[RMDB]
RNA sequence: GGGAACGACUCGAGUAGAGUCGAAAAAGCAUGUUAGGUUCGCAUGGUGCACUAUUGUGUUAUUAGUAACUAAGUAAGCUUAUAAUCGAAAAUGUUUAACCAUAAAAGGGUAAAAUGGUGUAAGACAGAUACCCUCUGAGCUUCGGCUCAGAGGGAACGUAGGUCAACAGUUCGCUGUUGACCUACGAAAAGAAACAACAACAACAAC
Reactivity to DMS in 0.01 (KOAc 150mM, MgCl2 10mM, bicine 150mM(pH8.5), 24C), signal-to-noise 1, nucleotides 027 to 156: a090g060c000a040u000g000u000u010a060g050g030u010u000c080g060c060a080u010g000g040u010g000c040a070c030u000a160u010u000g010u010g010u010u000a110u000u020a040g050u000a090a160c080u000a040a180g010u000a040a180g060c020u000u000a130u000a060a160u010c060g000a070a040a100a120u010g030u000u010u010a030a100c040c010a050u000a060a020a130a130g020g020g000u010a010a070a110a040u000g010g040u000g000u000a040a070g040a120c040a030g010a180u000a140c000c000c000u000c010u010g000a010g000c010u010u000c300g040g010c000u000c000a000g000a010g030g000g000a000a000
Reactivity to 2A3 in 0.01 (KOAc 150mM, MgCl2 10mM, bicine 150mM(pH8.5), 24C), signal-to-noise 3, nucleotides 027 to 156: a000g080c050a030u060g010u120u070a060g010g030u030u080c030g010c040a040u070g110g000u090g040c020a020c080u080a090u130u190g010u000g020u010u030a040u010u030a030g030u040a070a030c060u020a090a020g070u020a090a030g060c020u110u060a030u040a080a050u050c080g020a040a070a000a080u040g010u040u080u040a010a020c000c000a020u060a080a180a000a010g090g030g010u080a040a060a040a040u030g000g000u040g010u050a060a030g020a010c030a010g100a030u110a130c010c000c000u000c000u000g000a000g010c020u030u120c260g090g000c000u000c000a000g000a000g000g000g000a000a000